[RMDB]
An RNA of 177 nucleotides, treated with DMS and 2A3 and read out base by base.
The RNA was probed in 150 mM KOAc, 10 mM MgCl2 and 150 mM bicine (pH 8.5) at 24 C.
It was measured as part of the RMDB library OK2TST.
RNA sequence: GGGAACGACUCGAGUAGAGUCGAAAAUGGGCUGGGGAGAUGUUGGUCAAAGUUAGACAGGAGGAAUAAGUUCAAGAGAUCUAUUGUACAACUUAUUCAGUUAGAUAGGAGGAAUAAGCUAAAGAUCGUUUGGAAUGAAAUUCGUUUCAUUCCAAACAAAAGAAACAACAACAACAAC
Reactivity to DMS in 0.01 (KOAc 150mM, MgCl2 10mM, bicine 150mM(pH8.5), 24C), signal-to-noise 5, nucleotides 027 to 126: u000g010g020g000c090u020g030g000g000g010a080g020a100u010g000u010u010g020g020u000c060a070a090a100g010u000u000a080g010a080c050a080g000g020a140g000g000a020a030u000a010a040g010u000u000c050a070a150g010a130g010a060u010c070u010a140u010u010g020u010a100c230a020a030c010u000u000a010u000u000c000a120g000u000u000a090g000a120u000a060g010g000a120g000g010a040a030u010a050a080g000c050u010a060a090a050g010a060u010c090
Reactivity to 2A3 in 0.01 (KOAc 150mM, MgCl2 10mM, bicine 150mM(pH8.5), 24C), signal-to-noise 2, nucleotides 027 to 126: u050g020g010g000c050u050g010g000g020g000a050g020a020u040g040u140u040g010g010u030c030a060a080a100g070u070u040a030g030a030c020a020g050g030a020g000g090a070a020u030a050a020g030u030u050c050a060a010g030a020g010a120u000c020u080a110u140u200g040u050a050c000a040a000c030u000u010a000u020u000c010a020g030u070u070a060g020a160u080a060g020g040a050g010g030a020a070u070a030a010g010c020u060a060a030a020g060a050u090c060